RNA sequence: GGGAACGACUCGAGUAGAGUCGAAAACAACUGGAAUUCUGAGGAGGGUAGAAAGAAGGCCCCAAAGUGCUUGCCCUGAGCUUUGUUCUCCGUCUUAAGCUCUCAGUUCUCUGCCUGUGCUCCUUGGCACAGUGUGGGUGAGGAGUUUCCUUCUCAAGUAUCACCGAUAUUUCGAUAUCGGUGAUACAAAAGAAACAACAACAACAAC
Reactivity to DMS in 0.01 (KOAc 150mM, MgCl2 10mM, bicine 150mM(pH8.5), 24C), signal-to-noise 1, nucleotides 027 to 156: c040a090a090c150u000g020g010a070a110u000u000c040u010g000a080g010g010a040g000g020g050u010a090g020a110a100a100g020a100a120g000g030c000c000c030c040a070a080a090g020u000g010c000u020u020g010c000c020c040u000g010a090g020c010u010u000u000g010u000u000c020u020c030c040g000u000c050u020u000a070a180g000c120u010c010u010c040a060g020u000u000c020u010c010u000g000c020c000u020g030u000g010c000u000c150c190u000u000g000g090c000a030c020a010g000u010g060u000g010g000g000u000g000a140g010g000a130g010u010u010u010c040c030u000u000c020u010c000a050a300
Reactivity to 2A3 in 0.01 (KOAc 150mM, MgCl2 10mM, bicine 150mM(pH8.5), 24C), signal-to-noise 2, nucleotides 027 to 156: c030a000a030c060u040g040g050a060a090u170u020c050u060g020a050g020g020a020g020g020g000u130a080g140a060a110a040g080a030a030g100g020c040c040c030c010a070a070a000g060u080g050c030u060u090g050c010c060c000u030g030a020g010c000u010u080u080g030u070u030c040u020c050c010g060u040c070u060u040a060a030g010c010u000c000u000c020a100g020u200u000c040u010c000u030g020c020c000u000g000u010g000c020u100c160c110u090u260g020g000c020a010c010a010g040u050g010u040g210g040g030u040g030a020g020g010a010g010u020u080u010c020c000u050u060c010u020c030a050a070